[RMDB]
RNA sequence: GGGAACGACUCGAGUAGAGUCGAAAACGUCGCCGAGCUCACCAACUCCGUCUUCGAGCCGGCGAACAUGAUGGUCAAGUGCGACCCCCGCCACGGCAAGUACAUGGCGUGCUGCAUGAUGUACCGCCACUGUACUUUGUUUCGACAAAGUACAGUGAAAAGAAACAACAACAACAAC
Reactivity to 2A3 in 0.01 (KOAc 150mM, MgCl2 10mM, bicine 150mM(pH8.5), 24C), signal-to-noise 8, nucleotides 027 to 126: c040g040u010c000g000c010c010g010a080g010c000u010c010a060c030c010a090a150c080u100c120c080g160u050c090u160u180c110g000a000g000c000c000g000g010c010g000a010a010c010a010u130g030a080u110g010g020u030c030a060a070g090u030g090c030g050a080c000c000c000c000c000g020c020c010a030c020g060g000c070a150a070g070u100a090c040a060u070g040g000c040g030u060g010c030u090g010c010a040u120g020a050u090g070u060a020c010c010g030c040
Reactivity to DMS in 0.01 (KOAc 150mM, MgCl2 10mM, bicine 150mM(pH8.5), 24C), signal-to-noise 9, nucleotides 027 to 126: c200g000u000c010g000c000c000g010a130g020c010u010c010a140c160c140a080a120c100u000c080c090g010u000c090u000u010c170g010a010g010c010c020g010g010c000g000a010a020c080a060u010g010a090u010g010g010u000c030a110a190g020u010g010c060g010a090c030c020c040c040c000g010c040c040a050c050g010g000c030a070a120g010u010a040c040a040u000g000g010c020g010u010g000c080u000g010c040a060u000g000a130u010g010u000a040c020c050g010c090
The record gives the reactivity of an RNA of 177 nucleotides to 2A3 and DMS. For 2A3 the reverse transcriptase was SuperScript II with manganese. For DMS, 16,465 sequencing reads were counted.